[RMDB]
RNA sequence: GGGAACGACUCGAGUAGAGUCGAAAAGAGUCUAUGGAGUGAAGAACGACCAGCCAUUUUGAGGGAGAAAUAAUGGUAAUGCAAGCAUUGGGGAAAAAAACCCAAAUCUGGUACAAGAAAUAUUGACACAAUAAAAGAAUAAAUUACACUUCCUCUCCAUGGACUAACCGUUCGCGGUUAGUCCAUGAAAAGAAACAACAACAACAAC
Reactivity to 2A3 in 0.01 (KOAc 150mM, MgCl2 10mM, bicine 150mM(pH8.5), 24C), signal-to-noise 2, nucleotides 027 to 156: g000a030g030u080c020u060a040u090g000g000a000g000u060g070a020a040g050a160a030c100g000a090c060c030a020g000c010c010a030u070u050u080u120g040a020g020g030g010a050g060a060a100a000u120a000a080u070g030g040u100a090a030u090g050c060a040a090g010c010a030u010u010g000g010g030g000a000a030a000a180a000a000a180c020c000c020a070a000a000u040c010u040g000g030u070a050c010a080a050g020a130a040a030u130a080u030u210g060a020c020a000c030a070a150u240a120a110a010a000g070a010a030u110a130a120a040u190u120a020c050a000c060u070u020c000c040u000c010u000c040